[RMDB]
Structure probing data (DMS) for a 177-nucleotide construct. Reactivities are given for positions 27 through 126. The reactions ran in a buffer of 150 mM KOAc, 10 mM MgCl2 and 150 mM bicine (pH 8.5), at 24 C. High DMS reactivity at an A or C suggests that its Watson-Crick edge is free.
RNA sequence: GGGAACGACUCGAGUAGAGUCGAAAAGCAGGUGCCGGGCCUGCAAGGAAACUCUUCAAGUUGGAUGGAGGCUGCUGAGGAGGGAGGGGCAGAGCCCGAGUUGGCCUCUGGCCUGGCAGGGGUGAGGCGUGUAAGCAUUCUUCGGAAUGCUUACACGAAAAGAAACAACAACAACAAC
Reactivity to DMS in 0.01 (KOAc 150mM, MgCl2 10mM, bicine 150mM(pH8.5), 24C), signal-to-noise 1, nucleotides 027 to 126: g040c050a050g020g000u000g040c050c010g000g020g020c010c010u010g010c120a030a060g010g000a160a110a060c040u000c040u000u010c070a050a090g020u010u010g020g000a110u000g010g000a090g000g000c040u020g000c050u010g000a090g010g000a140g000g000g000a170g000g010g010g010c020a000g010a060g000c040c010c010g000a100g000u000u000g000g000c070c020u000c020u000g000g000c020c030u000g030g000c080a060g000g000g000g010u000g000a050g010g010